[RMDB]
RNA sequence: GGGAACGACUCGAGUAGAGUCGAAAAUCAGAAUCAGGCCGGAGUGUUUGGCGCUCCGUAAACACGGUCGUACAUCCAGCCGGUAGCCUGGUUCCUUGCAUUGAGUGAUGUACGGAGUUUAUAGAGCAAAAGAAAGACCUGUUCGCAGGUCUUUCAACAUACCAGGAUUGUUCGCAAUCCUGGUAUGAAAAGAAACAACAACAACAAC
Reactivity to DMS in 0.01 (KOAc 150mM, MgCl2 10mM, bicine 150mM(pH8.5), 24C), signal-to-noise 1, nucleotides 027 to 156: u000c030a090g010a060a020u000c020a030g020g060c010c050g000g000a130g040u000g040u000u000u000g040g020c080g010c000u010c000c000g030u000a030a060a070c050a150c060g010g000u000c040g040u000a020c030a040u000c000c030a210g010c010c030g030g020u000a130g030c030c010u030g020g000u000u000c000c020u000u000g000c110a150u000u000g000a170g020u010g010a020u010g040u000a060c030g000g000a150g010u000u000u000a110u000a080g020a130g020c050a050a070a090a190g000a020a020a020g000a010c000c000u010g030u000u010c300g010c000a020g020g010u000c010u010u010u000c000a040a140
Reactivity to 2A3 in 0.01 (KOAc 150mM, MgCl2 10mM, bicine 150mM(pH8.5), 24C), signal-to-noise 3, nucleotides 027 to 156: u120c000a000g010a000a000u020c000a010g000g000c010c000g000g000a030g040u090g040u120u260u260g130g040c040g000c010u000c000c000g010u040a040a030a000c130a010c030g040g030u060c000g010u000a010c000a040u000c040c020a030g040c000c000g000g010u010a000g000c000c010u000g010g000u000u000c010c020u010u110g040c000a110u030u140g090a060g080u100g040a020u010g010u020a010c030g030g010a070g020u100u140u040a180u090a050g120a000g050c040a030a000a070a070g010a010a000a000g000a000c000c000u010g040u040u090c260g020c100a000g000g000u000c000u010u000u000c000a000a000